[RMDB]
RNA sequence: GGGAACGACUCGAGUAGAGUCGAAAAGAUAUGGACUUAGGGAGCUCGGUAUCGGAAACGAUACAGAGCAUCGAUCUAAGGUCCUAAGUCAAACUCGUUAUAAUUUCUUCGGAAAUUAUAACGAGAACUAACAGUAGGAGUUCGCUCCUACUGUUAGAAAAGAAACAACAACAACAAC
Reactivity to DMS in 0.01 (KOAc 150mM, MgCl2 10mM, bicine 150mM(pH8.5), 24C), signal-to-noise 4, nucleotides 027 to 126: g000a060u000a300u010g010g000a200c000u000u000a010g010g000g010a030g020c000u000c000g010g020u000a000u000c000g020g000a100a060a170c010g020a010u000a010c000a030g000a010g010c000a100u000c200g000a070u020c020u000a030a040g000g010u010c000c000u000a030a130g030u000c030a100a130a170c000u000c000g010u000u000a000u000a000a000u000u000u000c000u000u020c160g010g000a010a000a000u000u000a000u000a010a000c000g010a000g000a030a120
Reactivity to 2A3 in 0.01 (KOAc 150mM, MgCl2 10mM, bicine 150mM(pH8.5), 24C), signal-to-noise 1, nucleotides 027 to 126: g020a000u060a030u140g000g000a000c010u010u010a000g000g000g030a040g020c000u000c030g010g000u010a000u020c000g030g000a070a050a030c000g000a000u010a000c020a020g000a020g000c000a050u150c010g030a030u000c010u030a040a040g160g060u040c000c000u010a120a020g050u020c040a060a060a130c000u000c000g000u000u000a010u000a000a010u010u000u000c010u020u050c300g080g000a010a000a000u000u010a000u020a010a000c000g000a000g000a000a020